[RMDB]
RNA sequence: GGGAACGACUCGAGUAGAGUCGAAAACUGGCGCUGCUCUGGUGAUGCGGACUGAAUACGCUCACGCGCUGCGUCUCUUCGCUGCUGGUUCUGCGGGUUAGUCUGCAUUUUCUCGCGAACCGCCUGGCCUCACAUGUGAGUUCGCUCACAUGUGAGGAAAAGAAACAACAACAACAAC
Reactivity to 2A3 in 0.01 (KOAc 150mM, MgCl2 10mM, bicine 150mM(pH8.5), 24C), signal-to-noise 3, nucleotides 027 to 126: c000u010g000g000c000g000c010u050g000c010u010c080u230g200g010u020g000a040u220g010c000g020g060a050c120u200g120a110a070u240a120c010g000c000u010c020a010c000g040c010g000c000u010g000c000g010u000c040u030c000u110u130c080g080c070u080g000c030u110g000g000u050u020c040u270g000c000g000g050g000u000u010a030g070u020c140u180g090c080a080u090u020u030u000c010u000c010g030c010g000a020a020c010c000g000c010c010u050g050g010
Reactivity to DMS in 0.01 (KOAc 150mM, MgCl2 10mM, bicine 150mM(pH8.5), 24C), signal-to-noise 3, nucleotides 027 to 126: c040u010g010g000c010g010c030u000g010c010u000c040u010g000g030u000g000a030u030g040c000g020g000a190c210u000g000a110a110u010a110c020g000c000u000c040a050c000g020c300g000c010u010g000c000g020u000c050u010c130u000u000c130g010c090u010g000c060u030g030g010u000u000c010u020g040c000g010g000g010u000u000a040g010u000c130u000g010c200a100u000u000u000u010c020u000c010g020c040g000a010a040c020c010g010c090c080u010g020g000
Description: This 177-nucleotide RNA was probed chemically with 2A3 and DMS. The RNA was probed in 150 mM KOAc, 10 mM MgCl2 and 150 mM bicine (pH 8.5) at 24 C. For DMS, 2,586 sequencing reads were counted.